An RNA of 177 nucleotides, treated with DMS and 2A3 and read out base by base. For DMS, 2,106 sequencing reads were counted. The reactions ran in a buffer of 150 mM KOAc, 10 mM MgCl2 and 150 mM bicine (pH 8.5), at 24 C.
RNA sequence: GGGAACGACUCGAGUAGAGUCGAAAACCCUGGUUAUUCGUAACCAGGGGUUGAGUGAAUCGUCUCAGUGCAUCGGUGGAUCACACGAAACGCAUGGACGACAAUUACGGUUAUUCGUAACCGUAAAUAGCGGAGAGUAAUUCGUUACUCUCCGCUAAAAAGAAACAACAACAACAAC
Reactivity to DMS in 0.01 (KOAc 150mM, MgCl2 10mM, bicine 150mM(pH8.5), 24C), signal-to-noise 2, nucleotides 027 to 126: c000c000c000u000g000g000u000u000a000u000u000c220g020u000a010a010c000c010a010g020g010g000g030u000u010g010a200g000u000g020a090a240u010c010g000u000c010u010c010a030g010u000g030c000a020u000c000g010g070u010g030g010a200u030c160a060c020a040c000g000a010a020a200c040g000c000a030u000g000g020a020c000g000a010c180a080a170u000u000a000c000g000g000u000u000a000u000u010c210g020u000a000a000c000c000g000u000a020a010a080
Reactivity to 2A3 in 0.01 (KOAc 150mM, MgCl2 10mM, bicine 150mM(pH8.5), 24C), signal-to-noise 1, nucleotides 027 to 126: c000c000c020u010g000g000u050u010a030u030u100c190g000u020a000a000c010c000a000g000g010g000g020u060u270g080a100g080u250g120a060a090u050c000g000u000c060u010c110a020g000u010g010c010a030u020c040g110g000u060g060g130a220u250c020a010c010a010c130g020a050a030a010c040g010c020a010u010g030g000a000c000g000a010c040a000a030u090u010a000c010g010g000u010u010a000u000u040c150g030u030a020a000c000c000g000u020a000a030a010